[RMDB]
An RNA of 177 nucleotides, treated with DMS and 2A3 and read out base by base. Conditions: 150 mM KOAc, 10 mM MgCl2 and 150 mM bicine (pH 8.5), 24 C.
RNA sequence: GGGAACGACUCGAGUAGAGUCGAAAACAGGGCAGUUCACCUUUGGCACAAGGGCAAGCAGUAGAAACCAUGCGUGCUUGCUAGAGCUGGAAAUGAUGCUGGUAGCAUUGCAUGGUUCAGGGAUCACACUAGAACAAUGGUUCGCCAUUGUUCUAGUAAAAGAAACAACAACAACAAC
Reactivity to DMS in 0.01 (KOAc 150mM, MgCl2 10mM, bicine 150mM(pH8.5), 24C), signal-to-noise 9, nucleotides 027 to 126: c120a080g010g000g020c050a050g010u010u000c050a090c070c030u000u000u000g010g010c040a050c070a080a070g000g010g010c070a050a070g020c050a070g010u020a090g010a110a030a020c010c010a010u000g000c000g010u000g000c010u000u010g050c010u000a030g010a040g010c020u010g010g030a160a170a120u030g000a060u020g010c000u000g000g010u010a030g000c010a010u000u030g030c000a010u000g000g010u000u010c040a070g010g010g010a100u010c100a090c190
Reactivity to 2A3 in 0.01 (KOAc 150mM, MgCl2 10mM, bicine 150mM(pH8.5), 24C), signal-to-noise 9, nucleotides 027 to 126: c050a010g010g020g000c010a030g020u060u050c030a060c030c000u050u060u070g060g010c020a030c030a110a050g010g010g020c030a040a030g020c020a030g020u170a030g060a060a030a010c000c000a000u000g000c000g010u010g000c000u060u090g000c010u030a030g020a010g130c030u060g050g100a070a140a170u240g050a070u260g030c000u010g010g030u010a000g000c000a000u010u300g000c000a000u010g000g000u020u000c000a010g010g000g030a030u080c030a030c000